About this RNA: The record gives the reactivity of an RNA of 207 nucleotides to 2A3. It was measured as part of the RMDB library RNAMAK. For 2A3 the reverse transcriptase was SuperScript II with manganese. Conditions: 150 mM KOAc, 10 mM MgCl2 and 150 mM bicine (pH 8.5), 24 C.
[RMDB]
RNA sequence: GGGAACGACUCGAGUAGAGUCGAAAAGCUCCUUCGGGAGCAAAAUAGGGGUCUAUGACGAUGAGGUUAAGACAUGCUCUGAAGCCUCCACGGAGCAACAGCUUAACUACCCACCAUCGUAUAGACGGAGGCACCCGCACUGCAUAUUCGUAUGCAACCCAAUGCUAUCGUUCGCGAUAGCAUUGGGAAAAGAAACAACAACAACAAC
Reactivity to 2A3 in 0.01 (KOAc 150mM, MgCl2 10mM, bicine 150mM(pH8.5), 24C), signal-to-noise 3, nucleotides 027 to 156: g010c000u000c000c020u010u060c270g130g000g010a000g010c000a080a060a000a000u110a020g040g020g060g030u010c000u010a000u040g160a040c010g000a000u000g020a030g000g040u020u020a000a010g010a070c090a200u180g020c000u030c010u000g030a090a020g010c000c000u000c000c000a000c010g000g010a000g040c010a020a070c050a070g150c010u020u010a010a000c000u090a130c090c080c070a040c040c000a020u010c000g000u000a000u000a000g010a000c050g000g000a000g000g010c000a040c000c020c000g050c040a110c120u050g000c000a000u040a050u060u140c140g140u070a020u020g000c020a090a200

The 2A3 profile rests on 2,036 reads.
Reactivities are given for positions 27 through 156.